[RMDB]
RNA sequence: GGGAACGACUCGAGUAGAGUCGAAAAGAGGCGAAAUAAUUCCCAUCUCCUAUGUACGGCCGGAGAUGGGUUUGGCCGUACUAAUAAGCCUCAUAGUGACGAGAGUCACGAAUUCUGGAUAGCCUUUGGUAGUCGGCUAUCCUGUGACUACCGUAGACAGUAGGAUGCGUUUCGACGCAUCCUACUGAAAAGAAACAACAACAACAAC
Reactivity to 2A3 in 0.01 (KOAc 150mM, MgCl2 10mM, bicine 150mM(pH8.5), 24C), signal-to-noise 1, nucleotides 027 to 156: g000a000g000g010c010g180a290a040a000u220a000a120u060u000c000c000c000a000u010c030u040c000c000u150a140u230g060u010a040c040g040g000c090c000g050g050a040g050a260u170g000g210g000u000u000u000g070g070c000c000g010u000a000c000u050a080a040u030a020a020g000c000c000u040c000a000u010a090g140u230g060a000c000g100a080g000a000g280u000c090a000c010g000a000a050u080u080c060u010g030g000a000u000a000g000c000c000u120u100u150g000g030u040a040g130u100c030g000g000c000u000a040u000c050c000u040g080u040g000a050c000u040a190c000c120g040u050a120g090a150